[RMDB]
RNA sequence: GGGAACGACUCGAGUAGAGUCGAAAAGGUCCAGUUUAAUUAUAACUGCAAAAAAUAAUAACAAUUCUUACGCUUUAGCUGCUUAAUAGGCGCUUAACGUAGAUCCUCCUAGGCUUGUCCGUGGUCUAGAUCUGGGUCCUAAAUUUAACGGACUUACCACUUAGCUCACGUUCGCGUGAGCUAAGUGAAAAGAAACAACAACAACAAC
Reactivity to 2A3 in 0.01 (KOAc 150mM, MgCl2 10mM, bicine 150mM(pH8.5), 24C), signal-to-noise 2, nucleotides 027 to 156: g030g030u100c010c000a000g000u020u000u050a200a070u150u110a110u130a180a110c020u050g000c040a020a060a060a000a110a150u180a060a060u140a150a070c020a080a180u150u100c060u100u030a010c030g060c040u010u000u040a010g000c090u040g030c020u230u080a120a030u240a300g000g000c030g030c000u020u000a000a000c000g020u020a040g000a010u000c000c000u020c000c000u000a000g000g010c000u000u150g000u020c000c000g000u000g000g000u000c000u000a000g040a100u020c050u080g040g000g030u020c000c010u220a300a300a300u160u140u150a080a000c000g000g000a000c000u000u090a030c020